[RMDB]
RNA sequence: GGGAACGACUCGAGUAGAGUCGAAAACGCAGGAGAAUCGAGGGAGGCUGCCCCUAGUACGAGAGGACCGGGGUGGACGGACCUCCGGUGAACCGGUUGUCGACCAACGGCAUGGCCGGGUAGCCGCUUGCUAUCACGGCUUCGGCCGUGAUAGCAAAAAAGAAACAACAACAACAAC
Reactivity to DMS in 0.01 (KOAc 150mM, MgCl2 10mM, bicine 150mM(pH8.5), 24C), signal-to-noise 2, nucleotides 027 to 126: c090g000c030a120g000g000a090g040a190a170u010c070g000a000g000g000g000a300g000g010c000u000g000c010c000c010c010u000a180g000u000a110c060g000a140g010a220g010g000a130c230c130g010g000g020g040u000g020g000a040c000g000g010a270c020c000u000c050c010g000g020u000g160a230a300c010c030g000g000u000u000g000u000c050g040a060c300c280a290a160c000g000g000c000a040u010g000g010c110c010g000g020g010u020a300g000c000c060g050c050
Reactivity to 2A3 in 0.01 (KOAc 150mM, MgCl2 10mM, bicine 150mM(pH8.5), 24C), signal-to-noise 1, nucleotides 027 to 126: c010g150c160a140g040g100a070g100a220a120u190c090g000a000g040g060g030a070g030g010c030u020g000c000c000c000c000u020a010g000u040a000c000g030a030g030a060g070g000a020c000c000g000g020g020g020u050g010g000a050c010g020g120a070c030c000u000c000c010g000g000u020g010a030a060c000c000g020g000u000u000g010u000c040g000a210c000c100a150a160c030g000g000c000a010u040g020g000c000c000g000g000g000u030a000g020c000c000g030c010

The record gives the reactivity of an RNA of 177 nucleotides to DMS and 2A3. For DMS the reverse transcriptase was MarathonRT. For 2A3 the reverse transcriptase was SuperScript II with manganese. The DMS profile rests on 865 reads. The reactions ran in a buffer of 150 mM KOAc, 10 mM MgCl2 and 150 mM bicine (pH 8.5), at 24 C. The data come from the RNA Mapping Database (RMDB), library RFM100.